[RMDB]
RNA sequence: GGGAACGACUCGAGUAGAGUCGAAAAGGUAUGAUUAUGGUGAGACCUAGGAACCGUAGGGGUAUUCUCAAAGGAAGCUUUUGCAGUGACGCCCAUGUAAGUGGGAUAUAACAACAGAACUCGUAUGUGUGGCACAGAGAGUUCGCUCUCUGUGCAAGAUGGAGAGAUAGUUCGCUAUCUCUCCAUCAAAAGAAACAACAACAACAAC
Reactivity to DMS in 0.01 (KOAc 150mM, MgCl2 10mM, bicine 150mM(pH8.5), 24C), signal-to-noise 2, nucleotides 027 to 156: g000g020u000a030u000g020a160u000u010a060u000g020g020u000g000a190g030a120c040c040u000a090g000g000a080a020c030c040g070u010a060g000g010g020g030u000a060u010u000c020u020c020a080a100a170g020g000a080a100g010c030u000u000u000u010g020c000a130g010u000g000a140c070g000c010c000c010a040u000g010u010a030a120g000u000g000g000g000a060u000a060u000a110a070c050a070a120c010a070g000a040a060c030u000c050g030u000a080u020g020u000g020u000g010g020c000a020c010a020g000a060g000a060g030u000u010c300g010c010u000c000u000c010u000g030u000g010c010a000a020
Reactivity to 2A3 in 0.01 (KOAc 150mM, MgCl2 10mM, bicine 150mM(pH8.5), 24C), signal-to-noise 3, nucleotides 027 to 156: g090g000u110a040u130g050a100u150u100a030u200g060g020u060g020a060g030a060c010c050u030a080g050g010a050a090c030c030g020u090a060g000g030g000g000u050a110u130u120c060u010c040a090a060a000g040g000a040a010g050c000u020u070u090u060g010c050a020g000u010g050a030c030g010c010c010c010a010u060g060u110a090a050g040u020g000g020g000a010u060a010u030a090a020c050a010a000c010a050g060a100a050c010u060c170g050u080a060u120g080u020g010u070g080g010c000a000c000a000g000a000g000a000g000u020u060c050g040c000u000c000u020c010u000g000u000g000c000a000a000